[RMDB]
RNA sequence: GGGAACGACUCGAGUAGAGUCGAAAACGCAUAGUUUCGACUAUGCGAAAAAACCGUAGGUCCGAUAAGCUGGAAGAACAACAGCUUCGAAAGAGGACAUGUUCGACCAGCUUUUGACGGACCUAAACGGAAAAAGAACUAGAUUCGUCUAGUUCAAGCAGUCUAUAUGAUUCGUCAUAUAGACUGCAAAAGAAACAACAACAACAAC
Reactivity to 2A3 in 0.01 (KOAc 150mM, MgCl2 10mM, bicine 150mM(pH8.5), 24C), signal-to-noise 3, nucleotides 027 to 156: c010g000c000a000u000a000g010u000u090u120c120g020a020c020u000a000u010g000c010g020a020a000a000a000a000a000c020c010g020u020a040g000g020u010c010c030g010a060u030a080a000g010c000u010g030g000a030a010g010a010a010c000a020a030c040a090g040c010u000u010c000g130a130a110a060g010a030g020g060a050c040a130u050g000u000u000c010g010a030c000c000a000g000c000u010u000u000u020g010a000c000g000g020a000c000c000u000a010a010a000c000g020g070a060a040a030a030a110g020a000a000c000u000a010g000a030u070u040c100g040u000c160u000a010g000u010u000c000a000a010
Reactivity to DMS in 0.01 (KOAc 150mM, MgCl2 10mM, bicine 150mM(pH8.5), 24C), signal-to-noise 3, nucleotides 027 to 156: c010g000c000a010u000a040g000u010u000u020c270g020a130c000u000a010u000g020c000g020a000a040a060a070a070a050c000c000g020u010a030g000g000u000c010c000g020a180u000a060a020g010c000u000g000g010a030a300g000a030a040c010a070a130c060a150g010c000u000u000c010g030a150a090a250g000a120g000g010a060c040a190u010g010u000u010c010g010a300c000c010a030g020c030u000u000u010u000g010a200c080g010g000a010c020c000u000a000a010a080c000g020g020a040a050a070a140a120g000a010a020c010u000a010g010a070u000u000c300g020u000c020u000a000g010u000u000c000a070a180